Structure probing data (2A3 and DMS) for a 177-nucleotide construct. The reactions ran in a buffer of 150 mM KOAc, 10 mM MgCl2 and 150 mM bicine (pH 8.5), at 24 C. Values cover nucleotides 27 to 126. DMS adducts were read by reverse transcription with MarathonRT. The DMS profile rests on 4,251 reads.

[RMDB]
RNA sequence: GGGAACGACUCGAGUAGAGUCGAAAAGAAGAGAAUAGCGGUGUAAGUGCAGCCCGUCUUACACCGUAAGGCACAGCGGAAACGCUGAUGUUAAAUACAGGGCUGUGAGACGGAAGUAGACCGUCAAAUAGCUGAGUAGUUUCGACUACUCAGCUAUAAAAGAAACAACAACAACAAC
Reactivity to 2A3 in 0.01 (KOAc 150mM, MgCl2 10mM, bicine 150mM(pH8.5), 24C), signal-to-noise 4, nucleotides 027 to 126: g100a010a020g100a000g100a070a100u160a120g010c000g000g000u000g010u000a020a000g020u020g040c020a020g010c000c010c000g000u010c000u000u000a000c000a000c000c000g000u040a030a040g080g000c000a000c000a010g000c010g010g040a090a090a000c000g000c010u000g010a060u010g000u010u150a090a020a000u250a080c090a020g010g000g010c000u000g030u070g000a140g000a010c000g030g000a090a090g040u130a080g060a110c000c000g000u000c000a160a000
Reactivity to DMS in 0.01 (KOAc 150mM, MgCl2 10mM, bicine 150mM(pH8.5), 24C), signal-to-noise 2, nucleotides 027 to 126: g000a120a060g000a170g030a090a070u020a210g000c020g010g000u000g010u000a000a010g000u000g000c030a040g000c000c000c030g000u020c010u000u000a010c000a000c040c020g000u010a010a030g030g000c010a040c000a040g000c000g000g000a100a080a130c000g020c000u000g010a150u010g010u000u000a100a130a080u050a060c110a120g000g000g010c030u000g020u020g010a120g000a000c000g000g000a070a140g020u040a110g010a050c000c000g000u010c010a020a050